[RMDB]
RNA sequence: GGGAACGACUCGAGUAGAGUCGAAAAAUAGGCUUAUCAAGAGAGGUGGAGGGACUGGCCCGAUGAAACCCGGCAGCCAGAAAUGGUGCCAAUUCGUGCAGCGGAAACGUUGAAAGAUGAGCCGAUGGACGAAGCGUGUUCGCACGCUUCAAAAGAAACAACAACAACAAC
Reactivity to 2A3 in 0.01 (KOAc 150mM, MgCl2 10mM, bicine 150mM(pH8.5), 24C), signal-to-noise 3, nucleotides 027 to 129: a000u150a000g000g020c000u000u000a030u060c040a090a000g010a020g020a040g010g030u050g000g030a070g020g020g020a030c040u060g170g210c030c010c020g070a110u040g000a030a030a030c020c000c000g010g000c030a020g200c000c000a010g040a000a030a000u030g000g000u010g000c000c000a010a060u110u090c060g050u060g040c000a000g000c010g010g000a050a010a060c000g030u030u010g010a100a060a040g010a020u020g000a020g020c000c000g010a020u040g050g010a020c080
Reactivity to DMS in 0.01 (KOAc 150mM, MgCl2 10mM, bicine 150mM(pH8.5), 24C), signal-to-noise 3, nucleotides 027 to 129: a120u030a000g020g050c000u000u040a070u030c050a160a030g050a120g050a110g020g030u000g010g040a000g060g000g000a200c140u070g060g070c000c000c000g020a040u020g040a030a220a070c040c110c030g030g040c070a080g080c000c020a030g040a040a120a110u040g020g050u030g000c010c040a130a000u010u030c060g010u000g060c020a020g050c040g000g030a090a150a100c040g040u040u050g010a090a100a170g030a030u000g030a030g050c010c010g020a090u130g010g020a000c190